[RMDB]
RNA sequence: GGGAACGACUCGAGUAGAGUCGAAAACAUGUUUUCUCGGCAACUAAAAGGAUGCGGACGACGGGUUGGUAGCGUUUUUUGGUACGAGGGCUGAGACGGCAUUAGGGAUUUUUGCUGGGCGAACUGACUCGGACUGAACUUUCGAGUUCAGUUCGAGAAAAGAAACAACAACAACAAC
Reactivity to DMS in 0.01 (KOAc 150mM, MgCl2 10mM, bicine 150mM(pH8.5), 24C), signal-to-noise 5, nucleotides 027 to 126: c110a080u010g020u030u000u000u020c020u010c040g000g000c040a080a090c140u010a030a040a090a080g000g000a070u000g020c050g000g000a080c070g010a040c050g000g000g020u020u010g020g020u010a050g010c060g000u000u000u010u010u010u000g010g020u000a060c090g010a090g010g000g020c030u000g000a100g010a090c040g010g010c040a030u000u010a080g000g010g010a080u000u030u020u010u000g000c020u010g000g000g010c070g000a030a090c070u010g010a240
Reactivity to 2A3 in 0.01 (KOAc 150mM, MgCl2 10mM, bicine 150mM(pH8.5), 24C), signal-to-noise 7, nucleotides 027 to 126: c060a050u150g040u010u040u040u010c020u010c000g050g000c020a090a040c040u110a050a060a100a080g140g010a050u070g020c030g070g030a050c030g030a010c020g060g020g010u090u150g060g030u090a050g030c030g010u030u000u010u040u120u070g050g000u040a060c060g010a080g010g060g000c000u020g020a010g020a070c020g020g010c010a010u040u130a100g020g020g090a080u060u030u020u050u120g030c030u050g020g000g010c020g030a040a020c030u040g030a020
Structure probing data (DMS and 2A3) for a 177-nucleotide construct. Reactivities are rounded to 0.1 and cut off at 0 and 3. For 2A3, 6,647 sequencing reads were counted. Conditions: 150 mM KOAc, 10 mM MgCl2 and 150 mM bicine (pH 8.5), 24 C. For 2A3 the reverse transcriptase was SuperScript II with manganese. The data come from the RNA Mapping Database (RMDB), library OK1LIB.